Description: An RNA of 207 nucleotides, treated with DMS and 2A3 and read out base by base. For DMS, 6,877 sequencing reads were counted.

RNA sequence: GGGAACGACUCGAGUAGAGUCGAAAACGCGAUGGAUACGUCCAUCGCGAAUCCGUCCAAGCCGCGGACGUUAAACUGUGGCACGGUUGUGCCUAGGUGCAACCCUGCUUCUAAUGGCGGCACCCCUGCCCAAGCUACCGUCUACGGACGGUAGCAAAUUUAUCAGUAGUUUCGACUACUGAUAAAUAAAAGAAACAACAACAACAAC
Reactivity to DMS in 0.01 (KOAc 150mM, MgCl2 10mM, bicine 150mM(pH8.5), 24C), signal-to-noise 2, nucleotides 027 to 156: c010g050c000g020a000u000g000g020a060u000a060c280g020u010c000c060a030u010c010g050c000g010a000a030u000c050c010g010u010c000c000a070a090g030c000c010g040c030g010g000a030c000g020u000u010a020a020a050c080u010g020u020g020g010c010a040c100g000g020u010u010g020u000g020c010c040u000a070g070g040u000g010c020a020a030c010c000c000u000g000c040u000u010c070u000a080a100u000g010g010c020g020g000c030a220c040c030c020c060u010g000c050c020c040a110a170g000c000u000a000c010c000g000u010c000u000a170c290g040g020a010c000g000g000u000a000g000c000a000a010
Reactivity to 2A3 in 0.01 (KOAc 150mM, MgCl2 10mM, bicine 150mM(pH8.5), 24C), signal-to-noise 1, nucleotides 027 to 156: c010g000c000g000a010u000g000g010a000u010a050c190g100u030c000c010a000u010c000g000c000g000a000a010u020c000c010g000u000c010c000a070a040g000c000c000g000c000g000g000a000c010g010u010u020a020a030a040c100u090g010u050g010g000c000a000c010g000g010u010u000g000u010g020c030c040u110a200g000g120u020g010c000a000a000c000c010c000u010g010c010u040u030c040u150a190a210u130g050g000c000g000g000c000a090c000c010c000c020u060g010c020c020c020a060a020g000c000u000a000c000c000g000u000c000u020a050c280g080g000a000c000g000g010u000a000g000c000a000a000
It was measured as part of the RMDB library OK3TST. Values are in units of 0.01, from 0 to 300, in steps of 10.